[RMDB]
RNA sequence: GGGAACGACUCGAGUAGAGUCGAAAAGGGGUCCACCUGAGGAGACGAACUACCACAAUGAUGUACUGAAGCCUCCACGGUAUUGAGUGGCGUCUUGUAGGGUGGACGGAGGCACCCAAAACUACAUCAGCAAAGGUUCGCCUUUGCUGAUGUAGAACACUAGGCCUCCGUUCGCGGAGGCCUAGUGAAAAGAAACAACAACAACAAC
Reactivity to 2A3 in 0.01 (KOAc 150mM, MgCl2 10mM, bicine 150mM(pH8.5), 24C), signal-to-noise 1, nucleotides 027 to 156: g040g030g020g040u080c020c010a050c030c000u090g080a150g090g070a030g050a030c030g000a120a040c090u180a060c280c000a040c050a110a300u220g010a040u140g040u000a000c000u020g150a190a080g040c000c000u000c010c000a020c030g020g000u000a020u030u040g050a010g000u000g000g000c030g010u000c010u090u060g130u190a070g110g000g000u000g000g000a000c040g000g050a060g000g000c020a030c000c000c000a070a040a040a040c010u010a000c000a000u010c000a000g000c000a000a000a000g040g060u130u160c300g020c060c000u040u010u000g000c000u000g000a000u000g000u000a000g000a000a000

Chemical mapping of a 207-nucleotide RNA with 2A3. Source: RMDB library RNAMAK, as collected in RNAgym. Conditions: 150 mM KOAc, 10 mM MgCl2 and 150 mM bicine (pH 8.5), 24 C.